[RMDB]
RNA sequence: GGGAACGACUCGAGUAGAGUCGAAAAGAUAUGGACGGAGACAUGAAGAGGAUCGGAAACGAUCCUUCUUCAACAGCUCCUGUCCUAAGUCAAAAGCUCCCGACUUUGUUCGCAAAGUCGGGAGCAACGUAACUCAUCUGUUCGCAGAUGAGUUACGAAAAGAAACAACAACAACAAC
Reactivity to DMS in 0.01 (KOAc 150mM, MgCl2 10mM, bicine 150mM(pH8.5), 24C), signal-to-noise 1, nucleotides 027 to 126: g000a060u020a300u010g000g040a030c010g010g010a000g000a060c050a270u010g020a000a000g000a030g000g000a000u000c010g020g000a080a150a140c000g010a000u000c010c010u010u010c000u000u000c020a020a030c220a140g010c000u000c010c010u010g030u010c000c000u010a040a070g020u010c010a120a080a170a130g000c010u000c000c010c000g000a010c010u000u000u000g000u000u050c170g000c000a000a000a030g010u000c000g010g010g000a000g000c010a000a000
An RNA of 177 nucleotides, treated with DMS and read out base by base. It was measured as part of the RMDB library TTRDEL. For DMS, 1,076 sequencing reads were counted.